RNA sequence: GGGAACGACUCGAGUAGAGUCGAAAAUAGUAGACUUCGGUCUACUAAAAAAGAUAUGGAUAGAUCGUCUUGUCAGCCUGAUAAUCGGAAACGAUUAUCCAGGCUUGGAUUUAGACGAGUCUAUCCUAAGUCAAAAACCGAACUUUCGAGUUCGGAACUUCCUUAUGAGAUUCGUCUCAUAAGGAAGAAAAGAAACAACAACAACAAC
Reactivity to DMS in 0.01 (KOAc 150mM, MgCl2 10mM, bicine 150mM(pH8.5), 24C), signal-to-noise 2, nucleotides 027 to 156: u000a020g010u000a010g010a000c010u000u000c300g090g000u000c000u000a010c010u000a000a020a120a110a040a060g000a080u010a280u000g000g010a030u000a010g000a080u000c010g020u000c000u010u010g010u000c040a060g020c000c000u000g020a030u000a010a000u000c040g030g000a250a130a230c000g010a030u010u000a000u000c070c100a000g020g030c000u000u010g000g010a020u000u010u000a030g020a030c010g000a030g010u000c000u000a000u000c010c000u000a000a090g020u000c020a070a070a040a090a100c000c010g010a020a010c000u000u030u010c260g020a040g020u010u000c010g000g020a020a020
Reactivity to 2A3 in 0.01 (KOAc 150mM, MgCl2 10mM, bicine 150mM(pH8.5), 24C), signal-to-noise 3, nucleotides 027 to 156: u060a000g000u000a000g000a000c010u040u030c300g070g010u000c000u000a000c000u010a030a000a000a000a010a010g060a020u090a030u100g000g000a000u000a000g010a000u000c000g010u000c010u010u010g010u010c010a000g000c000c000u010g010a000u000a000a000u000c030g010g020a060a120a080c010g000a000u010u000a000u000c070c050a010g010g000c000u000u040g010g000a000u100u190u240a010g000a010c010g020a010g000u000c000u000a000u000c000c000u000a020a010g010u010c010a000a040a040a070a080c030c020g000a010a010c010u060u180u180c270g110a040g010u010u000c000g000g000a000a010

Source: RMDB library RNAMAK, as collected in RNAgym. An RNA of 207 nucleotides, treated with DMS and 2A3 and read out base by base. Conditions: 150 mM KOAc, 10 mM MgCl2 and 150 mM bicine (pH 8.5), 24 C. For DMS, 3,917 sequencing reads were counted. For 2A3, 4,774 sequencing reads were counted. 2A3 adducts were read by reverse transcription with SuperScript II with manganese.